Chemical mapping of a 177-nucleotide RNA with DMS. Source: RMDB library OK2TRN, as collected in RNAgym. Reactivities are given for positions 27 through 126.
RNA sequence: GGGAACGACUCGAGUAGAGUCGAAAAAUAGAGCAUUGCCUGGGUUGACAGAUAUUACUUGUUCUAUAGGAGUGAACCCACACAACUAUGAAUGUUUUUGCUGACCAGAGACCCUUAGUUGUCAAGGUCUUUGCCAUGGAUUCGUCCAUGGCAAAGAAAAAGAAACAACAACAACAAC
Reactivity to DMS in 0.01 (KOAc 150mM, MgCl2 10mM, bicine 150mM(pH8.5), 24C), signal-to-noise 1, nucleotides 027 to 126: a050u010a070g010a070g010c060a070u000u010g010c050c000u010g020g010g020u000u000g010a090c050a020g000a050u000a050u010u010a080c130u020u000g020u000u000c010u000a010u000a030g000g030a250g030u000g010a110a090c030c000c000a210c110a010c000a060a140c030u000a030u000g000a090a040u000g010u000u000u000u000u000g010c120u010g010a030c070c020a040g000a110g000a040c000c100c050u000u000a080g000u010u010g000u010c100a130a090g000g000